Conditions: 150 mM KOAc, 10 mM MgCl2 and 150 mM bicine (pH 8.5), 24 C. This 177-nucleotide RNA was probed chemically with DMS and 2A3. Values cover nucleotides 27 to 126. For 2A3, 5,865 sequencing reads were counted. It was measured as part of the RMDB library OK2TST.

RNA sequence: GGGAACGACUCGAGUAGAGUCGAAAAAUGCUAAACCCAGACUGCUGGCCCUUAACUCUGUUCUCUCCUCUUCUGCAACUACCAGCAGUGACUGGAUGUCCAAAAGCCUGAGAACCCCACAGCCCCAGAUAGCAUUAAAUUUCGAUUUAAUGCUAUCAAAAGAAACAACAACAACAAC
Reactivity to DMS in 0.01 (KOAc 150mM, MgCl2 10mM, bicine 150mM(pH8.5), 24C), signal-to-noise 7, nucleotides 027 to 126: a080u010g010c060u000a060a120a110c060c010c010a070g010a110c040u000g000c030u000g000g010c070c040c030u000u010a080a110c080u000c070u000g010u000u000c050u000c020u000c030c020u000c050u000u000c040u010g000c040a060a080c110u000a140c040c010a030g000c020a060g010u000g010a100c010u000g000g010a090u000g010u000c060c060a060a080a100a120g000c040c030u000g010a110g010a100a170c060c010c000c020a080c100a080g000c020c000c000c080a120
Reactivity to 2A3 in 0.01 (KOAc 150mM, MgCl2 10mM, bicine 150mM(pH8.5), 24C), signal-to-noise 3, nucleotides 027 to 126: a000u100g010c020u060a070a090a110c000c000c010a010g030a020c030u040g010c000u000g040g030c010c030c000u060u090a110a050c030u070c040u120g090u160u030c030u010c010u010c020c020u040c040u090u020c000u040g030c020a050a050c040u070a050c010c000a010g020c010a030g020u010g030a010c000u000g000g040a030u070g010u000c000c000a100a100a050a110g010c010c020u070g020a070g040a110a070c010c010c010c000a020c020a020g030c010c000c000c000a010